[RMDB]
RNA sequence: GGGAACGACUCGAGUAGAGUCGAAAAACGAAAACUACGCACUCGCAGCUUAAUAACCUGCGCUGAGCCCUUCUCCCCCAGCUUGCCUGUGUCCUAGGGAAUUGGAAGGUCAUCCUUCACAGGAUCAUCUAGGUAAUCCCUUUCGAGGGAUUACCAACUGAGGAUAAACGUUCGCGUUUAUCCUCAGAAAAGAAACAACAACAACAAC
Reactivity to 2A3 in 0.01 (KOAc 150mM, MgCl2 10mM, bicine 150mM(pH8.5), 24C), signal-to-noise 1, nucleotides 027 to 156: a010c010g040a040a000a050a060c200u300a060c070g050c040a020c030u020c020g000c000a020g000c030u130u050a000a030u030a040a090c000c000u000g010c010g000c130u040g040a040g020c000c010c050u100u010c100u070c000c000c000c010c000a010g000c020u000u130g000c000c000u000g000u020g000u120c010c010u010a030g090g010g010a050a040u110u030g080g020a050a010g040g000u040c020a060u050c000c010u050u020c040a040c000a030g020g010a020u070c010a020u030c050u070a040g000g000u000a000a010u000c010c000c030u060u030u050c130g040a010g000g000g000a000u000u000a000c000c010a000a030
Reactivity to DMS in 0.01 (KOAc 150mM, MgCl2 10mM, bicine 150mM(pH8.5), 24C), signal-to-noise 1, nucleotides 027 to 156: a060c080g000a100a080a070a030c020u010a070c060g020c050a080c080u000c080g000c010a050g030c040u010u010a180a170u000a100a090c290c020u000g020c020g040c160u000g010a020g010c050c010c020u000u010c040u010c050c000c000c020c010a100g020c100u000u000g010c000c010u000g060u010g000u000c060c030u000a140g010g020g010a130a090u010u020g000g000a080a050g010g050u000c080a080u000c000c010u000u000c070a080c080a110g040g000a090u000c070a100u000c050u000a090g000g010u010a020a000u010c000c000c010u000u000u000c300g020a040g020g020g000a020u010u010a020c010c000a000a040

Structure probing data (2A3 and DMS) for a 207-nucleotide construct.
It was measured as part of the RMDB library M2RFPK.
Reactivities are given for positions 27 through 156.
Conditions: 150 mM KOAc, 10 mM MgCl2 and 150 mM bicine (pH 8.5), 24 C.
For 2A3 the reverse transcriptase was SuperScript II with manganese.
DMS adducts were read by reverse transcription with MarathonRT.